[RMDB]
Structure probing data (DMS and 2A3) for a 115-nucleotide construct. 2A3 is a SHAPE reagent: it acylates the 2'-hydroxyl of flexible nucleotides of all four kinds. For DMS the reverse transcriptase was MarathonRT. It was measured as part of the RMDB library P50LIB. The reactions ran in a buffer of 150 mM KOAc, 10 mM MgCl2 and 150 mM bicine (pH 8.5), at 24 C.
RNA sequence: GGGAACGACUCGAGUAGAGUCGAAAAUAACCCAUAUUGAUAUCCAAAAGAUAAAAAUAAUAAAAAUAAUGAAGAAAGUGAUACUUCGGUAUCGCAAAAGAAACAACAACAACAAC
Reactivity to DMS in 0.01 (KOAc 150mM, MgCl2 10mM, bicine 150mM(pH8.5), 24C), signal-to-noise 1, nucleotides 027 to 095: u030a080a100c010c000c000a170u010a030u010u000g000a170u000a000u000c000c090a090a070a130a300g000a050u000a000a050a070a030a020u010a070a090u030a000a070a070a040a100u080a140a020u010g010a060a130g010a110a080a080g030u010g020a070u000a090c010u030u040c070g030g020u010a010u000c080g000c010a000
Reactivity to 2A3 in 0.01 (KOAc 150mM, MgCl2 10mM, bicine 150mM(pH8.5), 24C), signal-to-noise 3, nucleotides 027 to 095: u060a010a040c000c000c010a010u050a020u060u040g030a020u010a000u020c030c020a050a030a100a040g040a010u140a020a090a040a020a010u240a040a050u220a100a140a070a040a050u300a120a100u290g070a060a130g060a140a190a010g010u020g020a010u010a020c010u020u060c180g080g020u000a000u000c000g020c030a050